[RMDB]
RNA sequence: GGGAACGACUCGAGUAGAGUCGAAAAACGAUGAUACGUACGCGUAUCAUCGAAGCUCGGAUGGAUAUAAUACAACCUGCUAAGUGUACUACCACUUACCAGGUUGUAUUAUUAUCGUCCGUGUUAAUCCUCCUAUAUUGUUCGCAAUAUAGGAGGAAAAAGAAACAACAACAACAAC
Reactivity to 2A3 in 0.01 (KOAc 150mM, MgCl2 10mM, bicine 150mM(pH8.5), 24C), signal-to-noise 3, nucleotides 027 to 126: a000c010g000a000u010g000a000u010a000c000g020u020a020c250g020c010g100u000a010u000c000a000u000c000g000a040a000g000c000u010c000g000g000a010u050g080g000a000u000a000u000a000a000u000a000c000a000a000c010c000u000g000c030u000a010a000g000u010g040u070a200c080u110a120c140c000a000c000u000u000a010c030c010a000g000g000u000u000g000u000a000u000u000a000u000u010a000u000c000g000u000c000c000g000u010g000u000u080a050a080
Reactivity to DMS in 0.01 (KOAc 150mM, MgCl2 10mM, bicine 150mM(pH8.5), 24C), signal-to-noise 9, nucleotides 027 to 126: a120c020g010a010u000g000a000u000a000c000g020u010a090c260g040c010g020u000a010u000c000a000u000c000g010a080a070g000c010u000c010g000g000a010u000g010g010a020u000a010u000a000a000u000a000c000a010a000c000c000u000g010c300u000a000a010g010u000g000u010a120c250u030a120c300c000a010c000u000u000a000c190c000a000g000g000u000u000g000u000a000u000u000a000u010u010a000u000c000g000u000c000c000g000u000g000u000u010a100a140